[RMDB]
RNA sequence: GGGAACGACUCGAGUAGAGUCGAAAAUCCUGGCUGAGGCGCCUAUAACUCAGUAGCAACAUCCCAGGACGUCAUCGCUUAUAGGCUGCUCCGUUCACCAGAGCUCACUGGUGUUCGGCUAAGAUUAAAGAGCUCGCCUCUUGCACCCUGACCUUCGACAACACAAUGUCUUCGGACAUUGUGUUGUAAAAGAAACAACAACAACAAC
Reactivity to 2A3 in 0.01 (KOAc 150mM, MgCl2 10mM, bicine 150mM(pH8.5), 24C), signal-to-noise 1, nucleotides 027 to 156: u000c000c020u030g050g020c020u000g000a000g030g000c050g000c050c000u010a000u010a040a000c020u020c000a000g040u110a020g060c030a030a070c020a130u160c030c010c000a050g050g060a070c040g110u100c020a160u130c090g000c190u050u030a000u000a010g000g000c000u000g030c000u030c000c020g000u000u000c000a000c000c000a000g020a040g060c040u060c020a140c010u000g020g000u000g000u020u000c000g000g000c000u040a080a000g020a090u090u300a150a120a010g010a010g010c020u030c140g070c030c050u010c020u060u150g040c030a060c040c010c010u020g020a070c000c030u000u070c060g050
This 207-nucleotide RNA was probed chemically with 2A3. The RNA was probed in 150 mM KOAc, 10 mM MgCl2 and 150 mM bicine (pH 8.5) at 24 C. It was measured as part of the RMDB library RSTRND.